[RMDB]
RNA sequence: GGGAACGACUCGAGUAGAGUCGAAAAGAUAUGGAUGUCCAAUCUUCGAUAAGAUAACAUCGGAAACGAUGUGUAUCUUUUGACGAAGGAGACAUCCUAAGUCAAAAGGGUAUGUUCGCAUACCCAAUCCGGUCAUAAAGUUCGCUUUAUGACCGGAAAAAGAAACAACAACAACAAC
Reactivity to 2A3 in 0.01 (KOAc 150mM, MgCl2 10mM, bicine 150mM(pH8.5), 24C), signal-to-noise 2, nucleotides 027 to 126: g020a000u000a000u070g000g000a030u020g030u000c030c030a160a200u120c040u020u000c020g150a160u070a300a000g010a010u000a000a020c000a020u000c000g030g050a000a020a000c060g000a000u000g030u000g050u040a000u030c010u030u100u050u260g300a170c090g030a000a050g020g070a210g000a000c010a030u000c000c000u000a010a000g070u000c040a070a020a120a160g000g000g020u010a010u000g030u040u180c300g000c180a010u020a000c000c000c000a010a010
Reactivity to DMS in 0.01 (KOAc 150mM, MgCl2 10mM, bicine 150mM(pH8.5), 24C), signal-to-noise 1, nucleotides 027 to 126: g000a020u000a230u020g000g020a000u010g000u010c010c070a160a180u000c010u000u000c000g020a210u010a010a010g000a010u000a010a040c000a000u000c020g030g000a070a030a100c010g000a010u000g040u000g020u000a010u000c000u000u000u000u000g000a180c150g000a020a020g020g000a190g000a010c000a000u000c000c000u010a000a080g020u000c010a090a060a090a190g000g000g000u000a000u010g000u010u020c260g040c020a020u000a010c000c000c020a020a010